[RMDB]
RNA sequence: GGGAACGACUCGAGUAGAGUCGAAAAGAUAUGGAUAUGUAAACUACCAUGUGAGCGUUGAAACCUAGUUUUCUUCGGAAACGAAGAAAACUAGGUGGAGCUCCAUGGCAAGUACAUAUCCUAAGUCCAUAUAUUACAACUUCGGUUGUAAUAUAUGAAAAGAAACAACAACAACAAC
Reactivity to 2A3 in 0.01 (KOAc 150mM, MgCl2 10mM, bicine 150mM(pH8.5), 24C), signal-to-noise 3, nucleotides 027 to 126: g070a030u120a050u300g000g000a000u010a000u010g010u010a040a060a020c000u000a010c000c000a010u040g260u300g060a000g020c040g220u300u080g020a040a030a000c000c000u000a000g000u000u010u000u010c000u010u020c010g010g040a090a080a070c020g000a010a000g000a010a010a000a000c010u000a000g000g000u000g000g000a000g000c010u000c000c000a000u010g000g000c000a000a000g000u000a000c000a000u000a010u000c000c000u000a130a020g030u000c020
Reactivity to DMS in 0.01 (KOAc 150mM, MgCl2 10mM, bicine 150mM(pH8.5), 24C), signal-to-noise 5, nucleotides 027 to 126: g010a110u000a300u010g000g010a000u000a010u000g000u000a020a000a090c000u000a090c000c000a010u000g000u030g010a010g030c000g020u000u020g000a180a220a040c000c000u000a000g000u000u000u000u000c000u010u000c000g010g000a110a110a270c010g010a010a010g000a010a010a000a010c000u000a000g000g000u000g000g000a090g010c000u000c000c000a000u000g010g000c000a000a010g000u000a000c000a000u000a000u000c000c000u000a030a100g010u010c040
Chemical mapping of a 177-nucleotide RNA with 2A3 and DMS.
The reactions ran in a buffer of 150 mM KOAc, 10 mM MgCl2 and 150 mM bicine (pH 8.5), at 24 C.
For DMS the reverse transcriptase was MarathonRT.
It was measured as part of the RMDB library TTRINS.